[RMDB]
RNA sequence: GGGAACGACUCGAGUAGAGUCGAAAAAAGGUCCGUUGUGACUAUGAGCAAUAUUUCCUGUCCCCAACGUGGAAAUGUCAGAGAGUGAAGUAGCCACAGGACGGGCCAAAAGCUCUCAAGAUGGGGAUCGUUCUUGCCUAUUCGUAGGCAAGAACGAAAAAGAAACAACAACAACAAC
Reactivity to DMS in 0.01 (KOAc 150mM, MgCl2 10mM, bicine 150mM(pH8.5), 24C), signal-to-noise 2, nucleotides 027 to 126: a080a100g010g020u000c000c030g050u000u000g000u030g010a030c020u020a080u040g000a200g030c170a090a080u000a090u000u000u000c000c000u000g000u000c060c000c010c000a040a210c110g010u000g020g000a040a030a040u020g000u000c100a140g010a090g020a050g090u000g000a130a130g000u020a250g020c010c000a020c090a170g050g010a070c160g000g000g030c030c010a070a050a100a280g030c020u000c000u000c020a070a110g020a080u000g010g010g000g000a120
Reactivity to 2A3 in 0.01 (KOAc 150mM, MgCl2 10mM, bicine 150mM(pH8.5), 24C), signal-to-noise 1, nucleotides 027 to 126: a000a000g080g000u000c020c050g140u100u110g030u080g030a010c040u050a120u220g090a070g080c070a160a020u020a060u040u050u050c030c020u060g080u110c000c000c000c040a060a080c060g090u120g070g140a050a070a070u030g070u050c030a050g030a000g000a010g050u030g000a010a000g040u020a000g000c010c010a070c020a030g120g210a070c100g000g000g060c000c000a000a000a000a000g050c000u000c000u030c040a010a020g010a100u150g000g030g000g000a030

An RNA of 177 nucleotides, treated with DMS and 2A3 and read out base by base. For DMS, 890 sequencing reads were counted. The reactions ran in a buffer of 150 mM KOAc, 10 mM MgCl2 and 150 mM bicine (pH 8.5), at 24 C. Source: RMDB library OK2TRN, as collected in RNAgym.